[RMDB]
RNA sequence: GGGAACGACUCGAGUAGAGUCGAAAAUCAUUGUCCUUUAUGCCAGCAUGCCGCACAUGCGCGUACAAGUCGCUAUAUCACUGACACGACAAAAGAGCGUUAUCAUCAGUGCCAGAACGUGAAUUGCAGCGCCACGUUCAUCACUUAUGAGUCGGUAAGAUUUCCGAAAAUUCGUUUUCGGAAAUCUAAAAGAAACAACAACAACAAC
Reactivity to DMS in 0.01 (KOAc 150mM, MgCl2 10mM, bicine 150mM(pH8.5), 24C), signal-to-noise 3, nucleotides 027 to 156: u000c070a130u000u000g020u010c000c060u000u000u010a070u030g020c000c030a120g020c040a110u010g010c020c030g040c060a300c020a080u000g020c010g020c020g080u000a100c070a070a170g020u010c040g010c030u000a090u000a130u000c100a090c040u010g010a080c050a070c020g010a110c030a020a060a100a090g010a160g030c060g010u000u000a110u000c080a020u000c040a050g020u000g010c100c050a130g000a040a050c020g020u010g020a090a080u010u000g040c040a050g000c040g020c250c000a000c000g020u000u000c010a120u010c010a020c020u020u000a060u000g010a060g010u000c010g030g000u010a120
Reactivity to 2A3 in 0.01 (KOAc 150mM, MgCl2 10mM, bicine 150mM(pH8.5), 24C), signal-to-noise 7, nucleotides 027 to 156: u140c050a050u040u150g040u070c010c000u050u160u070a090u160g040c030c020a010g030c020a040u060g050c030c040g060c020a050c010a080u060g010c020g010c010g030u050a050c020a120a070g030u040c020g000c050u070a050u040a040u300c060a040c090u030g050a020c020a010c140g080a020c070a040a160a030a020g080a020g020c020g060u090u100a070u070c010a010u000c010a000g010u000g050c070c040a070g010a020a010c000g000u010g040a100a100u140u180g030c050a040g030c010g010c040c010a020c010g010u010u000c010a040u050c000a020c000u000u040a020u040g030a040g040u070c020g010g000u050a030